RNA sequence: GGGAACGACUCGAGUAGAGUCGAAAAAGUCACCUAUUACGAUAGGUGACAUUUGAACCAGCGAACAAUUCAGUUGCGAGAUUCGAGGUUUCAGUCUGAAUCAUAGUAGCCAUUACGAUGACUACAACUCACUCCCGACUGUUCGCAGUCGGGAGAAGGUAGUUCAAGACUUCGGUCUUGAACUACCAAAAGAAACAACAACAACAAC
Reactivity to 2A3 in 0.01 (KOAc 150mM, MgCl2 10mM, bicine 150mM(pH8.5), 24C), signal-to-noise 2, nucleotides 027 to 156: a010g000u000c000a010c000c020u000a000u020u070a080c270g020a010u000a010g000g000u010g010a000c000a010u030u040u130g020a030a010c000c000a010g170c010g000a000a000c010a060a100u000u010c000a000g000u000u000g000c000g000a000g000a000u000u000c010g000a010g030g050u150u260u230c040a020g050u100c000u010g000a010a000u060c040a030u100a090g000u000a000g000c000c030a040u060u090a030c200g140a040u040g000a020c000u010a000c010a130a100c030u090c120a040c010u000c000c000c000g010a000c000u030g040u050u090c200g000c160a000g000u010c000g000g000g000a000g000a010a000